[RMDB]
RNA sequence: GGGAACGACUCGAGUAGAGUCGAAAAGAUAUGGACCGCAUGUAUUCGGUCAAUAGGGAGACCAAUUUGUCGGAAACGACAAUGCGGUCAUCGAUCUAUUGAGCCGAAUACAUGCGGUCCUAAGUCACAAAACGCACUAGUUCGCUAGUGCGUUUUGAAAAGAAACAACAACAACAAC
Reactivity to DMS in 0.01 (KOAc 150mM, MgCl2 10mM, bicine 150mM(pH8.5), 24C), signal-to-noise 2, nucleotides 027 to 126: g000a050u010a300u010g020g020a000c010c010g010c000a020u000g000u010a000u000u000c010g010g040u000c030a000a000u000a010g000g000g000a030g020a030c000c010a040a250u000u010u020g000u020c000g000g010a110a120a290c000g030a000c000a000a020u000g000c300g000g020u000c000a030u000c200g010a090u030c000u000a010u000u000g000a140g010c020c000g000a010a000u010a010c000a020u000g010c000g000g000u000c020c000u000a000a050g010u000c030a300
This 177-nucleotide RNA was probed chemically with DMS. The DMS profile rests on 1,285 reads. For DMS the reverse transcriptase was MarathonRT. Conditions: 150 mM KOAc, 10 mM MgCl2 and 150 mM bicine (pH 8.5), 24 C. Reactivities are given for positions 27 through 126. It was measured as part of the RMDB library TTRINS.